[RMDB]
RNA sequence: GGGAACGACUCGAGUAGAGUCGAAAACGCAUCCAACGCACGAACCGAGCGACAACGAAGACCGACCUCAACAUGCUCGACUUCUUCAACCGCGUCAAAUUCAUCCUCGGACCACCAGGAACCGGCAAAACAACGUACUUCAUCAACAACUAUUUCAGACCCUUUAUCAGUUCGCUGAUAAAGGGUCAAAAGAAACAACAACAACAAC
Reactivity to 2A3 in 0.01 (KOAc 150mM, MgCl2 10mM, bicine 150mM(pH8.5), 24C), signal-to-noise 2, nucleotides 027 to 156: c030g000c000a060u020c040c050a080a040c020g000c020a080c100g040a010a020c030c020g030a000g020c050g040a030c020a140a010c060g020a000a030g070a000c020c010g060a060c010c050u080c040a040a050c050a110u170g000c030u010c000g040a030c020u020u050c000u090u050c040a010a030c110c030g030c010g030u030c020a050a030a050u080u050c020a000u060c010c050u020c000g080g000a060c030c030a040c040c020a040g030g000a040a040c020c030g070g000c000a090a030a000a030c020a030a000c040g070u050a060c040u090u150c030a050u150c030a010a040c010a040a040c050u110a150u050u020u000c000a040